[RMDB]
Annotation: This 177-nucleotide RNA was probed chemically with DMS and 2A3. The RNA was probed in 150 mM KOAc, 10 mM MgCl2 and 150 mM bicine (pH 8.5) at 24 C. For 2A3, 2,881 sequencing reads were counted. Reactivities are given for positions 27 through 126.
RNA sequence: GGGAACGACUCGAGUAGAGUCGAAAAGAUGAUUGUGGGUUCCAAAAUUGUUCACAAUAAGGUAGACAUAUCUAAUGAUGUCAUUGUUGAACUGCCCGGAACAUUUCUGAAAGAGGCGGUGAAGAGAGAUAGAAAUAUGGUUCGCCAUAUUUCUAUCAAAAGAAACAACAACAACAAC
Reactivity to DMS in 0.01 (KOAc 150mM, MgCl2 10mM, bicine 150mM(pH8.5), 24C), signal-to-noise 6, nucleotides 027 to 126: g010a100u000g010a110u000u000g020u010g000g010g010u000u000c060c030a040a040a040a090u010u000g010u000u000c010a050c020a020a020u000a150a130g020g020u020a190g000a020c020a020u000a030u010c160u020a130a080u010g000a020u000g000u000c000a100u000u000g010u010u010g010a020a010c000u000g000c030c020c030g000g000a010a030c030a100u010u000u000c050u000g000a070a070a090g000a080g000g010c070g020g010u000g010a070a080g010a100g010a170
Reactivity to 2A3 in 0.01 (KOAc 150mM, MgCl2 10mM, bicine 150mM(pH8.5), 24C), signal-to-noise 4, nucleotides 027 to 126: g040a040u150g020a040u050u140g070u120g140g070g000u020u050c010c000a000a020a050a080u140u110g000u000u020c020a010c010a030a040u080a100a080g240g040u110a070g050a020c010a010u080a040u070c100u260a220a110u300g050a010u000g010u000c040a020u000u040g030u060u110g000a010a000c010u010g010c010c000c000g010g000a030a000c010a000u060u150u030c050u040g090a130a110a080g090a080g050g040c060g000g050u080g050a080a020g090a010g000a020